[RMDB]
RNA sequence: GGGAACGACUCGAGUAGAGUCGAAAAGAGGGACGAGGUCGGGGAAGGGGAGACCCCGAGGAGGAUCUCCAGCUAAAGAGUGGAGGAAAUCUCGGAAAGCUUCCCCCAAGAAGAACUGGGACGCUCUGUAGUCUACUCUUCGGAGUAGACAAAAGAAACAACAACAACAAC
Reactivity to 2A3 in 0.01 (KOAc 150mM, MgCl2 10mM, bicine 150mM(pH8.5), 24C), signal-to-noise 8, nucleotides 027 to 129: g040a010g020g020g020a010c050g010a020g010g030u050c030g020g000g000g020a040a030g020g000g010g000a010g020a020c020c000c000c020g010a010g050g060a020g010g020a020u010c010u000c020c010a060g020c040u140a120a120a020g130a090g080u060g010g000a020g010g030a060a050a050u030c010u020c010g020g000a090a040a010g010c000u040u050c000c000c000c000c010a020a030g050a030a010g000a060a020c060u040g000g010g020a010c020g010c030u010c010u030g030u040a030
Reactivity to DMS in 0.01 (KOAc 150mM, MgCl2 10mM, bicine 150mM(pH8.5), 24C), signal-to-noise 8, nucleotides 027 to 129: g000a060g000g000g000a040c090g000a010g030g000u020c050g030g000g020g000a060a080g030g010g020g010a000g000a060c030c000c000c020g040a070g000g010a050g040g020a160u070c000u030c010c010a090g000c080u010a020a040a030g020a300g060u000g020g010a000g040g000a040a060a070u040c020u000c020g020g040a050a050a050g020c110u000u040c020c010c000c050c070a070a080g030a060a050g030a020a030c090u020g010g010g000a060c130g020c100u030c030u000g020u000a160
Structure probing data (2A3 and DMS) for a 170-nucleotide construct.
The reactions ran in a buffer of 150 mM KOAc, 10 mM MgCl2 and 150 mM bicine (pH 8.5), at 24 C.
It was measured as part of the RMDB library 15KLIB.
DMS adducts were read by reverse transcription with MarathonRT.